[RMDB]
RNA sequence: GGGAACGACUCGAGUAGAGUCGAAAAUGUGGUUCCUUCGGGAACCACACACUUCCGAGAAUGAUCCUCGGUAUAUAAAUCAAACCCUUGGAAACAAGGGAACACUCCCUAGCUUCGGCUAGGGAAACCCUCAAUAAAACUUCGGUUUUAUUGAGGGAAAAGAAACAACAACAACAAC
Reactivity to DMS in 0.01 (KOAc 150mM, MgCl2 10mM, bicine 150mM(pH8.5), 24C), signal-to-noise 2, nucleotides 027 to 126: u000g000u000g010g010u000u000c010c000u010u000c220g030g030g000a000a000c000c000a000c000a020c100a030c120u000u000c000c000g030a010g020a090a090u000g000a180u000c130c000u020c000g000g020u020a050u010a120u000a020a050a080u010c140a080a070a120c000c000c010u000u000g010g000a140a070a160c000a020a020g010g010g020a030a050c170a090c140u000c000c000c000u000a000g000c000u000u020c160g010g000c000u000a010g000g010g020a000a030a020
Reactivity to 2A3 in 0.01 (KOAc 150mM, MgCl2 10mM, bicine 150mM(pH8.5), 24C), signal-to-noise 2, nucleotides 027 to 126: u040g000u000g000g000u000u010c010c000u010u020c160g040g000g000a000a000c000c010a010c010a000c000a000c010u140u010c000c010g010a010g050a090a240u260g020a070u100c020c000u010c010g000g020u000a050u010a010u030a110a090a020u100c080a070a050a300c000c000c010u010u000g000g030a040a030a020c000a010a000g000g000g000a000a000c000a020c010u000c000c000c000u010a010g000c000u020u040c270g050g000c010u000a000g000g000g000a000a000a010